Source information:
An RNA of 177 nucleotides, treated with DMS and read out base by base. Values cover nucleotides 27 to 126. For DMS, 1,244 sequencing reads were counted. It was measured as part of the RMDB library OK2TST. DMS adducts were read by reverse transcription with MarathonRT.

RNA sequence: GGGAACGACUCGAGUAGAGUCGAAAAAUACCAAUUGUUGGUAGUAGGUGUUAGCCCCUGGGACACCCCAAGCCCCAGCGGCAGAAUCUCCUGGGGAUCGGCAUGGCCGCACCAGGCGCGGCGCGCCCAGGUGCAUCUCGUUCGCGAGAUGCACCUGAAAAGAAACAACAACAACAAC
Reactivity to DMS in 0.01 (KOAc 150mM, MgCl2 10mM, bicine 150mM(pH8.5), 24C), signal-to-noise 2, nucleotides 027 to 126: a070u010a070c010c000a090a220u030u010g000u010u020g020g000u000a040g010u010a050g000g020u010g000u000u010a160g000c040c010c030c010u000g010g010g030a020c030a060c060c020c010c100a130a140g010c030c000c010c050a030g040c300g000g000c040a100g000a130a130u000c070u000c040c020u010g000g010g010g020a020u010c080g000g000c020a080u000g010g040c010c000g000c130a080c020c090a060g010g000c140g010c050g010g010c040g020c090g020c000c020